[RMDB]
RNA sequence: GGGAACGACUCGAGUAGAGUCGAAAAGCGUGCUUCGCCCGGGCGGACACUUCCUCUACACCGAUUCCCGUCGAAAUCCCGUCGUCGCCGAAUGGGAGGCGGCGUUGGCCGAUGCUCCGCUGCGCACCGUGAUCAGUGAGUUCGCUCACUGAUCACGAAAAGAAACAACAACAACAAC
Reactivity to 2A3 in 0.01 (KOAc 150mM, MgCl2 10mM, bicine 150mM(pH8.5), 24C), signal-to-noise 1, nucleotides 027 to 126: g030c000g030u060g010c070u080u090c030g030c000c000c000g060g050g010c030g000g000a010c020a020c040u060u000c020c030u000c030u020a050c060a040c060c000g120a130u090u050c020c000c010g040u050c010g070a080a030a110u090c000c010c010g040u050c000g030u020c030g020c020c010g110a160a080u080g090g000g000a030g000g000c000g020g010c000g030u040u050g060g000c020c000g030a010u070g010c010u000c020c000g060c030u050g000c020g000c010a060c050
Reactivity to DMS in 0.01 (KOAc 150mM, MgCl2 10mM, bicine 150mM(pH8.5), 24C), signal-to-noise 1, nucleotides 027 to 126: g010c100g000u000g010c100u000u000c040g000c030c020c050g010g040g020c040g020g010a070c110a080c050u000u000c050c030u000c050u000a070c110a090c080c040g010a110u000u000c050c010c010g010u000c030g010a080a060a110u010c020c030c030g010u000c040g030u000c030g000c030c020g010a120a060u000g020g020g020a200g010g000c000g020g000c000g010u000u000g000g000c070c030g000a060u000g010c050u000c020c010g000c020u000g050c050g010c080a070c120